Structure probing data (2A3) for a 207-nucleotide construct.
RNA sequence: GGGAACGACUCGAGUAGAGUCGAAAAAGACUUGGAUUUAAUGUUAGCCCCAUAAGUAAUUAAUACCAAUUGAAAGCAAACAUAAUCAGAUACUUAAUAGGACUGGCAGAAACUUUCACUCCUGUUCACUAGGUCAAAUUCAAUACAACUCAACCCAGUAAAUUAUCGGGUUCGCCCGAUAAUUUACAAAAGAAACAACAACAACAAC
Reactivity to 2A3 in 0.01 (KOAc 150mM, MgCl2 10mM, bicine 150mM(pH8.5), 24C), signal-to-noise 1, nucleotides 027 to 156: a000g020a010c010u030u030g000g000a020u040u090u160a100a050u120g040u090u120a080g050c000c000c010c010a060u050a160a000g060u030a060a020u120u020a000a070u140a210c000c000a020a020u030u080g030a010a000a000g000c060a120a000a000c000a050u100a000a000u050c010a010g030a100u110a280c010u100u200a120a070u080a260g000g100a010c030u000g010g060c010a000g140a180a050a000c030u050u010u020c010a010c030u110c020c000u040g050u080u010c020a030c100u030a000g050g030u010c090a100a100a000u060u010c010a050a000u050a100c030a000a110c050u000c030a060a060c000c030c000a010